[RMDB]
RNA sequence: GGGAACGACUCGAGUAGAGUCGAAAAAAUAAUCUUCAGGGCAGGGUGAAAUUCCCGAUCGGCGGUAAAGUCCGCGAGCCGAACGAAAAAGGUUUGGCAGGAACCGGUGAGAUUCCGAUACCGACAGCAAAGCCUCAACACUUCGGUGUUGAGGCAACUAAUGUAACGGUUUCGACCGUUACAUUAGAAAAGAAACAACAACAACAAC
Reactivity to 2A3 in 0.01 (KOAc 150mM, MgCl2 10mM, bicine 150mM(pH8.5), 24C), signal-to-noise 2, nucleotides 027 to 156: a000a000u160a040a030u060c050u140u140c080a090g020g060g070c030a030g030g000g030u020g000a020a030a080u050u020c000c010c010g000a130u170c010g010g000c000g020g000u000a000a000a000g000u000c010c000g000c010g000a010g000c000c000g010a010a010c010g090a110a030a030a060a110g060g000u000u000u000g000g000c000a010g010g000a020a000c020c020g000g000u000g000a020g000a000u000u000c000c000g000a000u010a000c000c010g070a010c030a010g100c040a070a040a070g000c000c000u000c000a000a000c000a000c000u080u080c240g050g000u010g010u000u000g000a000g000g000c000a000a000
Reactivity to DMS in 0.01 (KOAc 150mM, MgCl2 10mM, bicine 150mM(pH8.5), 24C), signal-to-noise 2, nucleotides 027 to 156: a060a140u000a060a050u020c060u000u010c040a120g000g020g020c080a080g000g000g020u000g010a100a080a300u000u000c020c000c010g000a070u000c040g020g000c010g020g000u010a120a120a050g000u000c030c000g000c040g000a180g050c020c000g060a010a140c010g020a040a170a080a140a160g020g010u010u000u000g000g010c000a040g010g000a030a020c020c010g030g000u000g000a270g010a300u000u000c000c000g000a090u010a000c000c000g000a080c020a060g000c080a030a050a150g010c010c010u000c010a000a020c010a030c000u000u000c230g040g030u000g010u000u000g000a020g000g020c000a000a000